[RMDB]
RNA sequence: GGGAACGACUCGAGUAGAGUCGAAAAGAUGUAGACCCUACAACAGGAAUGCAGCUAAUUGGUGUUCCUAUACCUAAUCAACAUAAUAAUAGCGGAUAUGCUGGAUUUACUACUCCAAGCGCUCCUAGAGAAGGACAUCCUUAUCCUGCAAAUUGGCCUGACUUAUUGGAUUCGUCCAAUAAGUCAGAAAAGAAACAACAACAACAAC
Reactivity to 2A3 in 0.01 (KOAc 150mM, MgCl2 10mM, bicine 150mM(pH8.5), 24C), signal-to-noise 5, nucleotides 027 to 156: g080a020u100g020u070a040g090a110c000c020c010u050a030c070a190a010c030a020g010g060a100a020u050g010c000a020g000c070u130a140a100u180u130g050g010u010g030u060u060c010c010u040a050u050a060c020c020u070a110a060u150c030a060a120c040a070u160a120a020u150a260a010u050a220g060c030g020g020a020u020a060u230g040c030u040g000g000a000u000u170u230a080c060u030a010c030u000c000c000a120a070g030c040g020c060u010c020c030u050a060g000a000g030a080a030g000g000a010c010a020u030c000c000u020u030a030u070c010c020u030g010c030a020a050a210u100u070g070g000c020
Reactivity to DMS in 0.01 (KOAc 150mM, MgCl2 10mM, bicine 150mM(pH8.5), 24C), signal-to-noise 2, nucleotides 027 to 156: g000a140u010g020u000a200g010a140c000c020c010u010a140c070a170a160c070a050g030g010a120a040u000g020c040a050g030c070u000a090a220u000u000g020g000u010g010u020u000c050c070u000a100u010a140c060c040u010a060a150u000c020a050a140c030a060u000a100a080u000a110a210u010a100g000c020g010g040a150u010a070u010g020c050u000g010g020a060u000u010u000a060c020u000a110c000u000c010c040a070a100g050c040g040c080u000c010c020u020a110g000a190g010a110a040g010g010a050c050a060u000c010c050u000u000a070u000c040c020u010g030c010a090a060a140u000u000g000g010c070

This 207-nucleotide RNA was probed chemically with 2A3 and DMS. Source: RMDB library OK3TST, as collected in RNAgym. The RNA was probed in 150 mM KOAc, 10 mM MgCl2 and 150 mM bicine (pH 8.5) at 24 C. The 2A3 profile rests on 2,510 reads.